[RMDB]
This 177-nucleotide RNA was probed chemically with DMS. Reactivities are given for positions 27 through 126.
RNA sequence: GGGAACGACUCGAGUAGAGUCGAAAAGAUAUGGAGAUACGAGAGCGCAUGGGCAAUGUCGGAAACGAUGACCCAUGAACUACGCUCGAGUAUCUCCUAAGUCAAAACCUUGGGUUCGCCCAAGGAACAAGGAAAGACUCUUCGGAGUCUUUCCUUGAAAAGAAACAACAACAACAAC
Reactivity to DMS in 0.01 (KOAc 150mM, MgCl2 10mM, bicine 150mM(pH8.5), 24C), signal-to-noise 1, nucleotides 027 to 126: g000a030u000a300u030g010g010a030g010a030u020a000c020g000a300g000a030g000c010g070c060a010u000g000g000g000c050a110a040u010g000u000c000g040g010a110a100a140c040g030a020u010g000a090c000c000c000a000u000g050a070a040c150u000a300c030g040c000u000c010g000a260g040u000a000u000c010u020c010c000u000a020a030g000u000c040a090a030a060a030c000c000u000u000g010g010g000u000u050c250g030c030c000c000a010a000g000g040a050a040